This 177-nucleotide RNA was probed chemically with DMS and 2A3.
The RNA was probed in 150 mM KOAc, 10 mM MgCl2 and 150 mM bicine (pH 8.5) at 24 C.
For 2A3 the reverse transcriptase was SuperScript II with manganese.
Values cover nucleotides 27 to 126.
RNA sequence: GGGAACGACUCGAGUAGAGUCGAAAAGAUAUGGACAGUUCAGAGAGCCAGAACUACAGAUGUCAUUCCUAUCGGAAACGAUAGGUGAAUGACAUCUGCUGGCUCGACGAAGAACUGUCCUAAGUCAGCAUUAGCUAUAGUUCGCUAUAGCUAAUGCAAAAGAAACAACAACAACAAC
Reactivity to DMS in 0.01 (KOAc 150mM, MgCl2 10mM, bicine 150mM(pH8.5), 24C), signal-to-noise 5, nucleotides 027 to 126: g010a050u000a300u010g000g020a010c000a010g010u000u000c000a070g000a210g000a030g010c000c000a030g010a090a020c160u020a300c020a010g000a000u000g010u000c000a010u000u000c010c000u000a010u000c000g010g000a160a130a210c010g010a010u000a010g000g020u010g010a020a000u000g000a010c000a000u000c000u000g000c010u000g000g000c000u000c010g030a090c300g010a130a100g000a010a010c000u010g020u000c000c010u000a000a080g010u010c070a190
Reactivity to 2A3 in 0.01 (KOAc 150mM, MgCl2 10mM, bicine 150mM(pH8.5), 24C), signal-to-noise 3, nucleotides 027 to 126: g010a020u080a030u180g000g000a000c000a000g000u000u000c030a030g070a000g000a000g090c000c000a010g010a130a050c280u300a060c240a000g010a020u020g000u000c000a000u140u170c010c000u000a010u010c010g000g070a060a060a100c020g000a010u010a010g040g060u040g210a010a000u000g000a000c000a010u020c010u000g000c000u010g000g000c000u010c000g000a010c000g000a040a080g010a000a000c000u000g010u010c000c010u000a040a020g070u020c090a010